An RNA of 177 nucleotides, treated with DMS and 2A3 and read out base by base. Source: RMDB libraries RFM100 and RFMREP, as collected in RNAgym.
RNA sequence: GGGAACGACUCGAGUAGAGUCGAAAAGCAACUCCCACUUCCAGUGGAUCGAAGGCACGCCGCGAGGCGCCCCGACGAUUCGCCGAGAAGCCUCUGUUCGAAAUCAUCGGGAGUGAUCCAGAUGACGAAACGCUGUGAGAUUCGUCUCACAGCGUUUAAAAGAAACAACAACAACAAC
Reactivity to DMS in 0.01 (KOAc 150mM, MgCl2 10mM, bicine 150mM(pH8.5), 24C), signal-to-noise 3, nucleotides 027 to 126: g000c110a130a080c060u020c000c000c010a300c060u000u000c000c030a090g000u000g000g000a020u000c040g020a050a300g000g000c300a100c000g020c020c000g040c200g000a190g000g030c000g000c060c300c020c000g000a300c000g000a060u000u000c010g010c030c020g000a170g010a020a030g000c170c040u020c050u000g030u020u010c030g000a020a150a190u000c000a010u030c000g000g060g010a000g040u080g000a130u000c010c030a080g000a010u000g000a000c130g000
Reactivity to 2A3 in 0.01 (KOAc 150mM, MgCl2 10mM, bicine 150mM(pH8.5), 24C), signal-to-noise 3, nucleotides 027 to 126: g030c010a010a030c050u040c000c000c000a030c010u000u000c010c000a010g010u000g020g000a020u020c020g020a040a020g030g000c090a000c060g000c010c000g030c020g040a080g000g000c010g000c030c000c000c020g050a040c000g000a030u030u020c010g030c010c040g150a240g020a050a000g020c000c040u160c060u080g130u080u170c040g040a100a070a080u040c020a010u000c010g020g020g000a040g040u080g030a030u020c020c010a030g010a030u020g020a030c060g080